[RMDB]
Chemical mapping of a 177-nucleotide RNA with DMS and 2A3. Source: RMDB library TTRDEL, as collected in RNAgym. The reactions ran in a buffer of 150 mM KOAc, 10 mM MgCl2 and 150 mM bicine (pH 8.5), at 24 C. DMS adducts were read by reverse transcription with MarathonRT.
RNA sequence: GGGAACGACUCGAGUAGAGUCGAAAAGAUAUGGAACGACGAAGAACUAAGCUACCCACCGCUUUCGGAAACGAAAGCGAGGCUUAGGGAGUCGUUUCCUAAGUCAAAAGGGUCGUUCGCGACCCAACUUGCAAGAGAAGUUCGCUUCUCUUGCAAGAAAAGAAACAACAACAACAAC
Reactivity to DMS in 0.01 (KOAc 150mM, MgCl2 10mM, bicine 150mM(pH8.5), 24C), signal-to-noise 3, nucleotides 027 to 126: g000a160u000a170u000g000g000a010a010c000g000a010c000g000a090a130g000a110a220c020u000a000a000g010c030u010a070c010c010c030a300c140c010g020c000u010u000u010c000g020g000a080a100a100c010g010a010a000a010g000c000g010a020g000g010c000u000u000a000g000g000g000a050g000u000c010g020u010u010u010c010c040u000a010a070g000u030c210a050a070a140a130g010g020g020u000c000g010u000u030c240g010c000g000a010c000c000c010a000a020
Reactivity to 2A3 in 0.01 (KOAc 150mM, MgCl2 10mM, bicine 150mM(pH8.5), 24C), signal-to-noise 2, nucleotides 027 to 126: g020a020u170a100u260g040g010a040a000c010g030a000c020g260a300a040g000a110a010c010u000a000a000g050c010u040a130c020c060c050a010c000c010g000c000u000u000u010c000g040g030a070a040a060c000g000a020a010a000g000c000g000a020g000g000c000u000u010a000g010g000g000a020g000u010c010g020u020u030u010c000c000u060a110a030g180u120c120a020a000a080a220g030g000g000u010c020g040u090u070c170g020c000g080a010c020c000c000a000a000